[RMDB]
An RNA of 177 nucleotides, treated with DMS and 2A3 and read out base by base. For DMS the reverse transcriptase was MarathonRT. Conditions: 150 mM KOAc, 10 mM MgCl2 and 150 mM bicine (pH 8.5), 24 C.
RNA sequence: GGGAACGACUCGAGUAGAGUCGAAAAGAAGAGAGGAAGAUUUAGGGGAAGAAGAUAACAAUAUUCACGCGGUCUUCCCAGUUACGUGUGUAGACACGAUGAUUGUUAUCAAAACUAAAUAUGAGAAGAGUCGGGUGAUAUUCGUAUCACCCGACUCAAAAGAAACAACAACAACAAC
Reactivity to DMS in 0.01 (KOAc 150mM, MgCl2 10mM, bicine 150mM(pH8.5), 24C), signal-to-noise 1, nucleotides 027 to 126: g000a050a100g200a050g010a170g080g010a090a010g000a040u000u000u000a020g000g050g000g080a070a000g000a130a090g000a060u040a020a050c030a000a050u000a040u000u000c130a110c030g060c070g000g000u010c070u000u010c000c020c040a180g000u020u020a170c280g000u000g000u000g000u000a010g000a030c000a170c130g010a100u030g000a050u000u000g000u000u000a000u000c010a000a100a030a090c060u000a000a130a000u000a050u000g050a100g020a020a020
Reactivity to 2A3 in 0.01 (KOAc 150mM, MgCl2 10mM, bicine 150mM(pH8.5), 24C), signal-to-noise 1, nucleotides 027 to 126: g060a040a000g040a010g000a000g090g060a040a050g000a070u050u040u240a060g010g000g020g040a140a040g000a090a000g000a000u050a000a010c000a060a000u050a020u100u200c000a010c010g060c060g010g000u000c000u000u000c000c000c000a000g070u070u190a130c100g000u000g000u000g000u000a020g040a050c000a000c110g130a080u020g010a040u020u060g000u000u010a010u070c030a040a040a040a040c050u050a020a000a030u150a050u120g130a120g010a210a000